Record summary: This 177-nucleotide RNA was probed chemically with 2A3 and DMS. The data come from the RNA Mapping Database (RMDB), libraries RFM100 and RFMREP. The reactions ran in a buffer of 150 mM KOAc, 10 mM MgCl2 and 150 mM bicine (pH 8.5), at 24 C.
RNA sequence: GGGAACGACUCGAGUAGAGUCGAAAACGCCGUCAUCACCUCGGUCAUCGAGGCGCGGGUCAUCCGCGCGAUAUAACCCAUGCCAUAGAGCGCGAUGGUCAGCACCGGCAGGAAGAAGUUCUCGAAUCUAAUUUCAUGAGUUCGCUCAUGAAAUUAGAAAAGAAACAACAACAACAAC
Reactivity to 2A3 in 0.01 (KOAc 150mM, MgCl2 10mM, bicine 150mM(pH8.5), 24C), signal-to-noise 6, nucleotides 027 to 126: c040g010c030c000g060u060c030a130u110c050a050c000c000u020c020g050g110u200c100a160u230c060g010a010g020g000c020g000c000g020g000g020u080c030a040u080c080c030g000c000g000c000g020a010u010a010u020a080a050c040c030c070a090u160g040c020c000a060u070a050g060a020g030c010g000c010g020a010u020g010g020u020c020a010g010c000a030c020c010g010g000c030a040g120g000a080a100g060a100a020g020u000u020c040u000c070g030a040a040u010
Reactivity to DMS in 0.01 (KOAc 150mM, MgCl2 10mM, bicine 150mM(pH8.5), 24C), signal-to-noise 4, nucleotides 027 to 126: c100g000c000c000g000u000c070a100u030c230a200c020c000u000c000g000g000u040c190a090u040c020g010a030g000g000c050g010c010g010g000g010u010c040a030u000c060c070g020c000g010c020g010a070u010a040u010a100a130c110c070c070a080u020g010c090c110a070u020a050g000a300g010c000g010c000g010a040u000g020g000u010c010a030g020c030a140c080c010g000g000c030a120g000g030a060a070g000a120a180g000u010u000c070u000c010g020a120a120u010